Chemical mapping of a 177-nucleotide RNA with 2A3 and DMS. For DMS the reverse transcriptase was MarathonRT.

RNA sequence: GGGAACGACUCGAGUAGAGUCGAAAAGUCGCCGCAUCUACAUCAACGCCCAGCGCGGGCGAGGGAGGCGUCCUACGGGGGUGACCCAUUCGCCGGCAUGGUAGAGGACAGCAAGAUUGCCUCGACGAGGCCCUAGUAAUUUCGAUUACUAGGGCCUAAAAGAAACAACAACAACAAC
Reactivity to 2A3 in 0.01 (KOAc 150mM, MgCl2 10mM, bicine 150mM(pH8.5), 24C), signal-to-noise 2, nucleotides 027 to 126: g030u000c000g020c010c000g010c010a050u030c030u080a030c010a100u100c040a080a060c030g060c020c030c000a030g110c300g000c080g120g020g000c030g000a040g000g030g030a140g020g020c020g040u020c010c010u020a170c110g200g000g020g000g000u050g100a190c020c000c010a050u060u030c010g000c020c000g140g000c040a030u080g020g000u080a040g010a030g030g040a070c020a050g010c020a060a090g020a120u110u260g020c000c020u020c010g010a010c040g030
Reactivity to DMS in 0.01 (KOAc 150mM, MgCl2 10mM, bicine 150mM(pH8.5), 24C), signal-to-noise 5, nucleotides 027 to 126: g000u000c030g030c020c060g000c060a070u000c030u000a090c080a110u010c060a060a120c070g000c060c010c000a090g010c160g010c070g020g000g010c000g030a040g000g010g000a120g010g000c020g010u000c010c010u000a120c210g010g010g010g000g010u000g000a140c020c020c000a160u010u000c040g010c010c000g000g030c030a050u000g000g010u010a080g000a070g010g000a060c070a070g010c090a090a090g010a100u010u010g010c000c010u000c010g010a100c160g010